Structure probing data (DMS) for a 177-nucleotide construct. Conditions: 150 mM KOAc, 10 mM MgCl2 and 150 mM bicine (pH 8.5), 24 C.
RNA sequence: GGGAACGACUCGAGUAGAGUCGAAAACGCUCAGGGCAUUUAUCUCGAAAAGCUGGCUGUUGCUGCUGCCCUCGGUCUGGGGAAGUGUGUAGCCUUUCACCACCAGGUUGUGAAUGGGAAAAAGCGCUCUUUAGUCGAGUUUCGACUCGACUAAAGAAAAAGAAACAACAACAACAAC
Reactivity to DMS in 0.01 (KOAc 150mM, MgCl2 10mM, bicine 150mM(pH8.5), 24C), signal-to-noise 2, nucleotides 027 to 126: c120g000c050u000c110a090g020g000g000c020a070u000u010u000a090u020c030u010c050g000a120a090a130a130g020c050u000g020g010c040u010g020u010u010g030c040u000g010c050u000g000c020c020c020u000c070g020g000u010c050u000g000g000g000g010a060a070g010u010g010u000g020u000a090g010c030c060u000u000u000c010a070c010c040a130c080c070a080g020g000u000u000g030u010g000a070a050u010g000g000g010a050a050a060a070a080g000c110g000c100